This 177-nucleotide RNA was probed chemically with 2A3 and DMS. It was measured as part of the RMDB library OK2TST. Values cover nucleotides 27 to 126.
RNA sequence: GGGAACGACUCGAGUAGAGUCGAAAAUCACUACAGCUGAUCACGCUGAUAUUUAUGGCGGCUAUCAAUGCGAACAGGCAUUUGGCCAGGCAUUGCGCCUUAAGCCUUCCUUACGUAGCCAACUGGACUUUCCGUCGUUUUUCGAAACGACGGAAAGAAAAGAAACAACAACAACAAC
Reactivity to 2A3 in 0.01 (KOAc 150mM, MgCl2 10mM, bicine 150mM(pH8.5), 24C), signal-to-noise 2, nucleotides 027 to 126: u050c000a030c110u140a050c010a010g000c030u100g000a300u290c070a060c130g000c020u010g030a130u050a140u090u220u070a220u140g070g000c040g020g020c000u020a000u130c050a020a090u050g010c050g090a150a010c060a120g000g030c000a050u030u000u150g030g000c000c000a000g040g020c060a050u030u230g030c010g000c000c000u000u040a030a000g010c010c000u030u010c010c000u030u030a070c070g020u040a020g060c030c020a050a080c050u030g020g030a020
Reactivity to DMS in 0.01 (KOAc 150mM, MgCl2 10mM, bicine 150mM(pH8.5), 24C), signal-to-noise 2, nucleotides 027 to 126: u010c070a070c130u010a120c040a030g000c020u000g050a160u020c120a090c250g000c020u000g010a080u010a020u000u000u000a080u000g000g020c100g000g000c060u000a060u000c140a040a030u000g020c060g010a040a060c200a070g020g050c100a130u000u030u000g000g000c000c080a070g000g020c130a120u030u000g000c130g000c000c000u000u000a060a110g000c000c000u000u000c020c010u000u010a120c180g020u000a030g000c040c010a080a210c030u000g010g000a290